[RMDB]
Background: The record gives the reactivity of an RNA of 177 nucleotides to 2A3 and DMS. 2A3 adducts were read by reverse transcription with SuperScript II with manganese. Values cover nucleotides 27 to 126. For DMS the reverse transcriptase was MarathonRT. The reactions ran in a buffer of 150 mM KOAc, 10 mM MgCl2 and 150 mM bicine (pH 8.5), at 24 C. Source: RMDB library M2PK50, as collected in RNAgym.

RNA sequence: GGGAACGACUCGAGUAGAGUCGAAAAAGCGGCCCUUUCGAGGGCCGCUGAUGGAAAGCCAGCCCAAAGGCAUUUUAUUCCUUGGCUGGCGAAAGCCUAAAAUUCACGCUGCUUUCGAGCAGCGUAACAACAAUUAUCUGUUCGCAGAUAAUUGUUGAAAAGAAACAACAACAACAAC
Reactivity to 2A3 in 0.01 (KOAc 150mM, MgCl2 10mM, bicine 150mM(pH8.5), 24C), signal-to-noise 3, nucleotides 027 to 126: a010g000c010g010g050c020c030c030u020u040u050c220g050a020g040g000g000c000c020g010c000u000g000a000u030g020g050a030a020a000g000c000c000a000g000c000c020c050a110a050a000g000g000c010a010u100u180u090u220a150u150u020c000c000u010u020g010g000c000u000g010g000c000g000a000a010a020g030c000c000u070a110a100a010a040u140u140c040a010c020g000c000u010g000c010u050u080u150c230g030a000g000c000a000g000c000g010u010a000a000
Reactivity to DMS in 0.01 (KOAc 150mM, MgCl2 10mM, bicine 150mM(pH8.5), 24C), signal-to-noise 6, nucleotides 027 to 126: a030g010c000g010g020c010c000c000u000u000u010c150g010a020g030g010g020c010c000g010c000u000g000a050u000g010g000a060a100a300g000c000c000a000g010c040c040c300a050a040a030g000g010c300a040u000u010u010u010a150u020u000c000c000u010u000g000g000c000u000g000g010c000g000a010a050a080g010c000c010u000a050a060a080a150u010u000c130a020c010g020c000u000g000c000u000u000u010c120g010a020g010c010a010g010c000g010u000a020a070